[RMDB]
RNA sequence: GGGAACGACUCGAGUAGAGUCGAAAAUGCACAAGAUUAUACAAGCGAAAAUAUUGCCAUCCUUACAGCAGCAAAGUCUCAACUACUUGAAUUUGCAAAUUUAAGCACUGACGUCUCCUUCAAUGAAGAGAGUAUCCUUAUUCGUAAGGAUACUCUCAAAAGAAACAACAACAACAAC
Reactivity to DMS in 0.01 (KOAc 150mM, MgCl2 10mM, bicine 150mM(pH8.5), 24C), signal-to-noise 5, nucleotides 027 to 126: u000g000c050a080c090a070a120g010a070u000u010a060u010a100c100a080a070g020c030g000a060a090a080a120u000a070u000u000g010c030c050a050u000c050c030u000u000a050c110a040g010c040a050g000c040a070a070a050g000u010c040u010c050a050a080c130u010a040c070u000u000g000a050a030u000u010u000g020c080a060a070a080u000u000u010a020a060g000c060a060c100u000g020a070c080g010u000c030u010c010c030u000u000c110a030a080u000g020a090a130
Reactivity to 2A3 in 0.01 (KOAc 150mM, MgCl2 10mM, bicine 150mM(pH8.5), 24C), signal-to-noise 4, nucleotides 027 to 126: u130g010c030a030c040a090a080g020a070u130u140a090u180a200c080a090a070g030c030g120a130a000a050a010u230a090u060u120g000c000c010a030u010c010c010u070u070a050c030a050g040c000a010g000c030a050a020a050g050u000c010u000c060a050a090c010u170a030c020u050u050g020a050a060u080u080u090g040c040a070a090a170u090u160u070a080a020g000c010a030c070u040g050a040c030g020u000c010u000c030c000u120u160c050a100a200u100g090a150a050